[RMDB]
RNA sequence: GGGAACGACUCGAGUAGAGUCGAAAAGCCAGGUGCUCUCCAAGGCGCGAGCGGGGCUGUGGAGAGAGCCGGGGUCUCCGAAUCUCUGCGGCUCUGGGUCCAAGCACCUAAUGAGAGAGCCUUGCAGCCACGUAAGGGGAUUCGUCCCCUUACGUGGAAAAGAAACAACAACAACAAC
Reactivity to 2A3 in 0.01 (KOAc 150mM, MgCl2 10mM, bicine 150mM(pH8.5), 24C), signal-to-noise 1, nucleotides 027 to 126: g010c010c010a000g010g030u140g060c000u000c000u020c000c010a040a030g020g020c050g030c020g040a050g140c000g000g000g020g040c020u010g050u060g030g010a010g000a000g000a020g090c050c000g000g000g020g290u090c140u060c140c000g020a040a060u030c010u020c010u020g000c000g030g000c010u000c020u050g060g080g080u090c090c020a080a040g010c000a000c000c000u000a060a200u210g030a070g000a030g000a020g070c000c000u000u030g000c000a050g050
Reactivity to DMS in 0.01 (KOAc 150mM, MgCl2 10mM, bicine 150mM(pH8.5), 24C), signal-to-noise 1, nucleotides 027 to 126: g010c070c050a040g020g020u020g010c000u000c000u000c000c160a190a020g000g010c010g020c010g000a160g000c020g020g000g030g000c010u020g020u020g000g020a040g010a020g020a080g000c200c020g040g000g030g020u020c140u010c030c050g000a170a160u000c020u010c020u020g010c010g010g000c000u000c000u010g030g030g000u000c140c170a090a280g000c000a020c000c010u000a070a120u010g000a080g010a040g000a050g010c020c000u000u000g010c040a100g000
Structure probing data (2A3 and DMS) for a 177-nucleotide construct. DMS adducts were read by reverse transcription with MarathonRT. The 2A3 profile rests on 1,319 reads. The DMS profile rests on 1,088 reads. It was measured as part of the RMDB library OK2TRN.